[RMDB]
RNA sequence: GGGAACGACUCGAGUAGAGUCGAAAAGAUUGGACUCCCUUCCGCGGUGACACUCACAGAAGCCUUUGCAGCCUCGCAAGAGGUCUGGCGCGACAGUAAAGAAUGCCUGAUGCAAGUCAGUUCGCUGGCAACACUUUCGAAUUGCGGGGACGUCCUGCCUUGUGUAUAAGUUCGCUUAUACACAAGGAAAAGAAACAACAACAACAAC
Reactivity to 2A3 in 0.01 (KOAc 150mM, MgCl2 10mM, bicine 150mM(pH8.5), 24C), signal-to-noise 8, nucleotides 027 to 156: g050a050u150u170g000g010a020c010u020c010c010c000u040u030c060c020g000c010g050g010u050g040a050c040a030c140u100c030a080c040a090g100a100a020g020c020c020u120u170u200g020c050a030g020c000c000u020c020g010c040a050a060g000a010g000g020u040c020u010g020g000c000g000c010g030a040c010a020g040u130a040a090a030g060a070a050u090g050c010c010u070g040a090u060g030c060a070a080g040u100c020a030g050u070u060c030g010c050u020g020g010c000a020a030c030a030c100u130u220u170c090g080a200a150u070u090g020c030g000g000g000g010a010c110g010u010c000c010u000g010
Reactivity to DMS in 0.01 (KOAc 150mM, MgCl2 10mM, bicine 150mM(pH8.5), 24C), signal-to-noise 3, nucleotides 027 to 156: g010a240u010u000g010g010a140c040u000c000c010c020u000u000c030c030g040c060g000g020u010g010a060c090a090c010u000c030a150c050a180g000a080a160g000c000c010u000u000u010g020c050a120g000c010c000u000c000g010c220a130a170g010a060g010g010u000c030u010g030g030c050g020c030g010a120c000a080g000u010a070a110a110g000a110a070u000g010c070c010u000g030a140u010g010c070a060a140g010u000c030a060g030u000u000c140g010c020u000g000g010c010a080a100c040a180c050u000u010u000c060g010a050a110u000u010g020c000g040g000g000g020a050c100g010u000c010c030u000g010